An RNA of 207 nucleotides, treated with 2A3 and DMS and read out base by base. High DMS reactivity at an A or C suggests that its Watson-Crick edge is free.

RNA sequence: GGGAACGACUCGAGUAGAGUCGAAAAACUCAACGCUAAUUUAAUUCGAAGAGGUGAGUUUUGGGUGCACAAGCAAGCCGUUCUAAACGGAUCCUUAAACACGCAGGUAGCCUCAAACAUGUUUAAUUCGAGUUUAACAUAGCCGAUUCGUCGGCUACUGCAAUAUAACGUUCGCGUUAUAUUGCAGAAAAGAAACAACAACAACAAC
Reactivity to 2A3 in 0.01 (KOAc 150mM, MgCl2 10mM, bicine 150mM(pH8.5), 24C), signal-to-noise 5, nucleotides 027 to 156: a000c030u040c060a060a030c090g020c100u070a090a070u120u060u100a050a030u090u100c040g020a090a030g000a040g030g000u040g030a100g060u070u080u180u050g070g020g000u030g000c040a090c020a070a020g020c010a080a240g000c000c000g040u110u120c160u300a080a100a000c000g000g000a000u040c010c010u030u000a040a130a010c000a000c050g130c020a020g000g030u010a000g010c000c000u040c040a060a090a030c040a040u160g090u120u130u140a090a060u080u060c030g010a010g020u040u040u040a090a050c060a050u040a010g000c010c000g030a020u060u090c130g090u010c010g140g000c000u010a010
Reactivity to DMS in 0.01 (KOAc 150mM, MgCl2 10mM, bicine 150mM(pH8.5), 24C), signal-to-noise 2, nucleotides 027 to 156: a040c000u000c010a030a090c110g010c070u010a090a110u000u000u000a090a240u000u000c050g040a220a110g000a030g030g050u000g000a160g030u010u000u000u020g000g030g080u010g050c030a300c300a080a130g050c060a060a120g000c010c000g040u020u000c130u020a060a070a080c040g000g000a040u000c100c040u000u000a020a160a040c010a030c030g000c050a070g030g080u010a230g000c020c000u000c060a070a150a060c000a040u000g000u010u030u000a070a190u010u000c020g010a120g000u000u000u000a110a060c060a090u000a020g030c010c000g000a100u000u010c290g020u000c020g020g000c010u000a010
Source information: Source: RMDB library RFM130, as collected in RNAgym.